[RMDB]
RNA sequence: GGGAACGACUCGAGUAGAGUCGAAAAUAAUGAUUCCGGAAAUGGUAUUCCGAAUUUCCUCUUCAAAGGUGGGAAUAGCUUCCUGUACUAGCGCUUCUUCUAAAUCGACAGAAGACGGUGGACUUGGUGAAGGAGUUCUGCGACGUCGACGUGUACGUGAUUGAAGCAUGUUCGCAUGCUUCAAUCAAAAAGAAACAACAACAACAAC
Reactivity to 2A3 in 0.01 (KOAc 150mM, MgCl2 10mM, bicine 150mM(pH8.5), 24C), signal-to-noise 1, nucleotides 027 to 156: u170a000a110u080g080a060u050u100c080c050g060g060a010a050a030u170g070g000u140a140u030u010c020c000g010a020a000u020u010u040c010c020u000c070u190u030c110a160a070a060g140g020u080g080g010g000a070a080u010a070g030c010u050u040c010c030u010g050u100a040c010u050a040g050c020g010c040u040u000c040u000u030c000u050a100a100a060u150c080g020a020c000a080g030a010a000g030a040c000g040g020u030g040g020a080c040u030u060g020g000u040g030a040a030g020g010a040g000u060u070c070u080g060c000g040a040c050g050u070c000g040a070c080g060u040g020u120a010c040g040
Reactivity to DMS in 0.01 (KOAc 150mM, MgCl2 10mM, bicine 150mM(pH8.5), 24C), signal-to-noise 1, nucleotides 027 to 156: u010a080a120u000g010a090u000u000c010c010g000g010a050a020a200u010g020g000u010a130u010u000c030c030g030a070a020u000u010u000c030c010u000c030u000u000c180a080a100a060g030g030u000g030g050g010a060a030u010a070g000c050u000u010c020c020u000g010u000a080c010u000a020g020c050g010c030u000u000c080u030u000c020u000a060a130a100u000c110g020a180c080a060g010a060a160g000a110c140g000g000u010g030g010a060c050u000u010g050g020u000g020a080a080g010g010a050g030u010u000c030u010g020c060g010a070c060g020u000c020g000a050c030g070u000g030u000a080c150g030